[RMDB]
RNA sequence: GGGAACGACUCGAGUAGAGUCGAAAACGGGCUAUGAGGGAUACCUCAUCAACUAUGGAUACGGUGUACCAUAGCCUUAGACGAUCUUCGUUUAAAGCACAGCGAAGCUAUAGGCCUAUGUCGUCUAGGUACAGAGAGAUUUCGAUCUUUCUGUACCAAAAGAAACAACAACAACAAC
Reactivity to DMS in 0.01 (KOAc 150mM, MgCl2 10mM, bicine 150mM(pH8.5), 24C), signal-to-noise 9, nucleotides 027 to 126: c110g000g000g000c010u000a000u010g000a110g000g010g000a050u010a020c000c010u000c140a040u010c040a110a150c230u040a140u030g010g000a050u000a080c150g000g010u010g010u000a040c010c000a020u000a000g000c000c000u000u010a030g000a030c010g000a030u020c150u010u000c210g000u010u000u010a040a090a100g000c110a090c150a090g010c130g010a060a040g010c170u020a070u010a040g000g010c010c060u000a050u020g010u000c010g000u000c010u000a050
Reactivity to 2A3 in 0.01 (KOAc 150mM, MgCl2 10mM, bicine 150mM(pH8.5), 24C), signal-to-noise 9, nucleotides 027 to 126: c030g000g000g000c000u010a010u030g040a230g050g180g050a030u040a050c000c020u050c040a030u020c020a030a200c090u230a140u300g160g000a020u040a080c100g010g010u020g010u030a020c000c000a000u000a000g000c000c000u000u020a010g000a000c010g010a020u020c010u020u010c010g070u020u030u150a220a230a050g120c100a070c070a100g020c020g020a020a000g000c010u070a080u080a200g090g030c010c010u080a090u110g030u010c010g000u000c010u020a060